Structure probing data (DMS) for a 177-nucleotide construct. For DMS the reverse transcriptase was MarathonRT. The RNA was probed in 150 mM KOAc, 10 mM MgCl2 and 150 mM bicine (pH 8.5) at 24 C. The DMS profile rests on 622 reads.

[RMDB]
RNA sequence: GGGAACGACUCGAGUAGAGUCGAAAAACAGACUGAUGCCUUGAAACAGGGUUCACCCAUCAGACUAUUCCCAGGAGGGGGUAGGAAUCCUGGGUUUGAGUCCCAGCUCAGACACUAUGUGGAUAAGUGGCUGAAAUCUUUUCGAAGAUUUCAGCCAAAAAGAAACAACAACAACAAC
Reactivity to DMS in 0.01 (KOAc 150mM, MgCl2 10mM, bicine 150mM(pH8.5), 24C), signal-to-noise 1, nucleotides 027 to 126: a020c090a040g000a090c020u010g000a100u000g010c020c010u000u010g000a110a120a120c090a020g010g010g030u010u000c060a180c080c150c040a070u010c010a090g000a180c020u000a180u000u000c000c000c000a150g000g000a220g000g000g000g020g030u030a040g000g000a080a020u000c010c000u000g000g000g030u000u000u010g000a070g000u000c010c080c020a210g000c060u000c060a060g000a060c040a090c090u010a110u030g000u000g000g000a090u000a070a120g000